Source: RMDB library TTRDEL, as collected in RNAgym. Structure probing data (DMS and 2A3) for a 177-nucleotide construct. The reactions ran in a buffer of 150 mM KOAc, 10 mM MgCl2 and 150 mM bicine (pH 8.5), at 24 C.
[RMDB]
RNA sequence: GGGAACGACUCGAGUAGAGUCGAAAAGAUAUGGAAACGUACGCUGACCACGCGUAACAUCCCUCGGAAACGAGGGUGGUAUCAAGCGACGUUUCCUAAGUCAAACGAUGAUCUUCGGAUCAUCGAACCCAACACUUUACUUCGGUAAAGUGUUGGGAAAAGAAACAACAACAACAAC
Reactivity to DMS in 0.01 (KOAc 150mM, MgCl2 10mM, bicine 150mM(pH8.5), 24C), signal-to-noise 2, nucleotides 027 to 126: g000a000u000a090u000g000g000a020a000a020c000g000u000a100c000g070c000u000g020a160c150c140a140c290g000c110g060u000a060a050c060a000u000c000c000c000u000c000g000g000a000a020a050c010g000a000g000g000g070u000g010g000u010a000u000c230a010a210g000c000g000a020c000g010u000u000u000c000c000u020a000a070g000u010c040a140a090a240c030g010a040u000g000a000u020c000u000u000c160g020g020a000u000c000a000u000c020g010a030a080
Reactivity to 2A3 in 0.01 (KOAc 150mM, MgCl2 10mM, bicine 150mM(pH8.5), 24C), signal-to-noise 2, nucleotides 027 to 126: g000a030u030a000u100g010g060a030a010a010c010g030u300a270c030g000c010u070g050a130c070c100a130c280g290c120g040u050a030a030c040a050u300c000c030c000u000c000g020g020a000a000a000c010g000a010g000g000g000u010g000g000u020a070u170c100a120a000g000c000g020a010c000g000u000u090u000c000c000u020a020a010g030u010c040a040a070a120c020g010a020u010g010a000u000c010u060u070c300g150g010a010u000c010a000u000c020g020a020a010